[RMDB]
Record summary:
Structure probing data (DMS and 2A3) for a 207-nucleotide construct. Source: RMDB library M2RFPK, as collected in RNAgym. The DMS profile rests on 2,087 reads. The RNA was probed in 150 mM KOAc, 10 mM MgCl2 and 150 mM bicine (pH 8.5) at 24 C. Values cover nucleotides 27 to 156. For 2A3 the reverse transcriptase was SuperScript II with manganese.

RNA sequence: GGGAACGACUCGAGUAGAGUCGAAAAGGGUUUUGCGAUCUUUAAGCAGAUGGCAGGUUCACCCCGUACGGUGCGGAAGUGCGCGCUUCCGUGAAACGCGAAAAUCGGACGGUGGCUGCAAGUCGCAUUGAAGGGAUCGCCUUCGGGCGAUCCCUAACCACAACGUUUAAUUCGUUAAACGUUGUGGAAAAGAAACAACAACAACAAC
Reactivity to DMS in 0.01 (KOAc 150mM, MgCl2 10mM, bicine 150mM(pH8.5), 24C), signal-to-noise 1, nucleotides 027 to 156: g020g030g030u000u010u000u000g040c030g010a050u010c000u000u100u050a090a170g020c130a040g030a060u000g010g000c040a060g010g010u000u010c020a100c010c010c010c030g010u010a040c070g020g030u030g000c000g030g000a050a060g050u000g020c100g030c130g010c030u020u000c000c010g000u010g010a040a100a030c080g000c040g010a140a040a100a070u000c060g000g010a040c040g060g030u000g010g030c080u000g050c030a100a030g020u000c030g030c040a100u000u000g020a140a040g010g030g020a070u000c110g030c020c000u000u000c300g080g030g020c000g050a000u030c010c020c010u020a000a010
Reactivity to 2A3 in 0.01 (KOAc 150mM, MgCl2 10mM, bicine 150mM(pH8.5), 24C), signal-to-noise 2, nucleotides 027 to 156: g050g000g000u040u060u050u070g020c030g000a040u040c070u040u200u130a150a040g030c080a050g030a140u180g050g000c020a000g020g020u120u140c020a030c010c000c000c000g010u030a030c040g000g000u020g010c010g000g000a010a060g020u070g110c090g020c020g000c060u010u010c010c010g010u020g070a100a070a020c130g000c020g090a070a070a000a080u090c000g010g030a020c050g030g000u050g040g010c040u030g000c030a020a030g030u000c010g000c060a060u020u090g030a040a050g000g000g010a000u000c000g020c000c020u020u070c130g050g020g000c000g010a000u010c000c000c000u000a000a010